Annotation
An RNA of 207 nucleotides, treated with DMS and 2A3 and read out base by base. The DMS profile rests on 2,994 reads. 2A3 adducts were read by reverse transcription with SuperScript II with manganese. The 2A3 profile rests on 3,301 reads.
[RMDB]
RNA sequence: GGGAACGACUCGAGUAGAGUCGAAAACAAAUACUCUCCUUUUAUUGGAGGAGCAGUAACUAUUGCGGGAAUUUUGUUACGUAUAGGAUUUGCUUGUGUAGCGGGAGAAGACCCAUUACCCAUGGAUUUUAUACCGCAAAUACCUAAUUUUGUACCACCGUCUAAAUGAAUUCGUUCAUUUAGACGGAAAAGAAACAACAACAACAAC
Reactivity to DMS in 0.01 (KOAc 150mM, MgCl2 10mM, bicine 150mM(pH8.5), 24C), signal-to-noise 2, nucleotides 027 to 156: c040a070a060a140u010a020c010u010c000u000c010c000u000u000u000u000a100u010u020g020g010a060g030g010a050g040c050a070g030u000a030a120c120u000a100u010u000g000c030g000g000g050a050a160u010u000u000u010g020u000u010a100c070g010u030a040u000a040g010g010a070u000u000u000g000c120u000u010g020u000g020u000a100g020c010g000g000g010a160g000a120a220g010a110c020c000c000a040u010u000a080c070c120c070a140u010g030g020a060u010u000u010u000a040u000a020c010c010g050c000a060a030a090u000a080c010c020u020a070a180u000u000u000u010g010u000a120c030c070a140
Reactivity to 2A3 in 0.01 (KOAc 150mM, MgCl2 10mM, bicine 150mM(pH8.5), 24C), signal-to-noise 5, nucleotides 027 to 156: c010a010a100a040u070a010c000u010c000u010c010c010u060u060u060u150a300u190u300g050g000a020g000g000a010g000c110a000g020u050a020a040c100u110a120u150u180g040c100g030g030g090a140a090u060u060u010u060g060u060u130a040c070g010u020a020u000a030g000g030a020u020u020u140g160c060u040u020g010u000g010u030a010g000c020g000g050g020a130g050a190a050g120a200c000c000c010a010u040u030a010c010c050c000a000u010g120g000a000u030u010u000u020a010u020a010c010c010g000c000a010a000a020u040a020c010c000u020a060a160u060u110u070u140g040u050a080c010c050a020